[RMDB]
RNA sequence: GGGAACGACUCGAGUAGAGUCGAAAAAUCACGCUAGAUGAGCUUGUCGGCGUAUCGCGUAAGUGGGUUCACAGUCAUGGUGUAAAGAUCAUUUUCAUUGACUAUGCCCAACGCAUUACCGUUCCUGGCGCUGAUCGAAUUCAGGAAGUUGCCAGCAACGAAACAUCGUCUUCGGACGAUGUUUCGUAAAAGAAACAACAACAACAAC
Reactivity to 2A3 in 0.01 (KOAc 150mM, MgCl2 10mM, bicine 150mM(pH8.5), 24C), signal-to-noise 1, nucleotides 027 to 156: a000u080c010a000c000g030c030u070a100g040a150u050g050a060g090c080u030u010g070u010c040g000g020c010g060u060a000u060c090g000c000g000u020a090a030g220u120g020g060g000u140u100c060a000c050a060g060u000c000a010u010g060g010u000g150u220a030a180a010g160a010u220c010a010u060u000u050u090c040a050u130u080g000a060c000u000a060u130g000c000c000c000a000a000c010g040c000a020u000u080a060c020c000g030u070u050c000c000u000g000g000c040g000c000u020g000a020u100c140g050a030a150u170u050c010a000g000g090a110a020g030u140u220g150c030c010a030g000c060a190